[RMDB]
RNA sequence: GGGAACGACUCGAGUAGAGUCGAAAAACUGACGGUACGCCGUCAGAACGGUAGAAAAGAUGGUUUGAAAACCGCGCCUUCUACCAAUAUAGUAAAUAAAUAGGCGGAGCGGUCAUACGUGACCGCAAAAACAUAUUCAGCUUCGGCUGAAUAUGAAGUGUCUUUAUUCCUUCGGGAAUAAAGACACAAAAGAAACAACAACAACAAC
Reactivity to 2A3 in 0.01 (KOAc 150mM, MgCl2 10mM, bicine 150mM(pH8.5), 24C), signal-to-noise 1, nucleotides 027 to 156: a010c000u010g010a000c000g000g060u040a010c170g050c040c020g000u000c020a030g010a010a000c060g010g000u000a000g010a000a000a020a010g080a210u070g010g040u050u130u130g140a120a140a010a000c000c000g000c020g000c020c000u000u050c000u000a020c000c010a000a010u120a000u070a000g140u110a020a000a210u070a060a080a040u120a030g000g000c020g030g010a010g000c000g000g000u020c000a010u060a080c280g080u020g000a010c000c000g000c000a010a000a000a000a000c000a000u010a000u000u000c000a000g000c020u060u120c120g160g000c000u000g010a000a000u000a000u000g000a080a040